[RMDB]
The record gives the reactivity of an RNA of 177 nucleotides to 2A3 and DMS. High 2A3 reactivity points to a flexible backbone, as in loops and unpaired stretches. The reactions ran in a buffer of 150 mM KOAc, 10 mM MgCl2 and 150 mM bicine (pH 8.5), at 24 C. The 2A3 profile rests on 37,065 reads. For DMS, 15,563 sequencing reads were counted. Source: RMDB library TTRDES, as collected in RNAgym.

RNA sequence: GGGAACGACUCGAGUAGAGUCGAAAAGAUAUGGAAUCGCUGUGGAGCUCCUAUCGGAAACGAUAGAGAGCUAUGAAGCAGGAUUCCUAAGUCAAAACAUUAUGCAAGGUUCGCCUUGCAUAAUGAACCUGAGUAAUAAGUUCGCUUAUUACUCAGGAAAAGAAACAACAACAACAAC
Reactivity to 2A3 in 0.01 (KOAc 150mM, MgCl2 10mM, bicine 150mM(pH8.5), 24C), signal-to-noise 4, nucleotides 027 to 126: g000a010u020a010u060g000g010a000a000u010c040g020c300u010g010u040g020g070a020g000c000u000c000c000u000a000u000c000g000g010a040a010a000c010g000a000u010a000g140a010g010a000g090c010u020a190u040g000a010a000g000c000a000g000g000a010u010u000c000c000u000a020a000g010u000c020a010a020a060a200c010a010u010u000a000u010g000c000a000a010g050g040u080u150c300g210c050c000u010u000g000c000a000u000a000a000u000g000a000a030
Reactivity to DMS in 0.01 (KOAc 150mM, MgCl2 10mM, bicine 150mM(pH8.5), 24C), signal-to-noise 6, nucleotides 027 to 126: g000a020u000a090u010g000g000a020a010u000c000g010c000u000g000u000g000g010a030g010c000u000c000c010u000a000u000c000g020g000a020a020a040c000g010a020u000a000g000a090g000a010g020c000u000a020u020g010a100a300g000c000a010g000g010a020u000u000c000c000u000a000a070g000u000c010a130a100a160a300c010a010u000u000a000u000g000c000a000a000g010g010u000u020c300g010c000c000u000u000g000c000a000u000a000a000u000g000a080a140